[RMDB]
RNA sequence: GGGAACGACUCGAGUAGAGUCGAAAACCAGCACAGUUGCCAGCUCCUAGGACUUUGUUGACUAGAGGCACAUUGGAACCAGAAAAUUUCAAUAGUGUCACUAGAUUGAUGUGUAACUUAGGUCCUGCUAUUUUAGCGUGUUCGCACGCUAAAAUAGAAAAGAAACAACAACAACAAC
Reactivity to DMS in 0.01 (KOAc 150mM, MgCl2 10mM, bicine 150mM(pH8.5), 24C), signal-to-noise 2, nucleotides 027 to 126: c000c000a120g020c110a070c110a080g010u000u000g010c070c040a050g030c030u000c010c020u000a020g000g010a030c040u000u010u020g000u000u000g000a050c000u000a000g000a070g010g000c000a000c000a050u000u000g000g010a000a000c070c070a220g020a070a080a150a200u000u010u000c000a000a010u000a120g040u000g020u010c010a070c000u000a000g000a190u000u000g010a080u010g000u000g010u000a050a040c040u000u000a040g000g000u010c030c020u010g010
Reactivity to 2A3 in 0.01 (KOAc 150mM, MgCl2 10mM, bicine 150mM(pH8.5), 24C), signal-to-noise 1, nucleotides 027 to 126: c000c000a000g050c040a080c010a060g140u090u150g100c030c010a050g000c030u010c030c000u030a000g000g040a070c040u120u180u280g020u000u040g020a010c000u010a020g000a050g030g000c000a010c010a000u010u000g020g030a000a000c030c030a170g240a180a070a030a030u000u020u010c000a020a020u000a060g030u010g010u030c030a030c020u000a050g010a300u010u080g050a040u070g110u030g040u080a040a060c000u030u060a020g030g030u000c010c020u010g000
This 177-nucleotide RNA was probed chemically with DMS and 2A3. 2A3 adducts were read by reverse transcription with SuperScript II with manganese.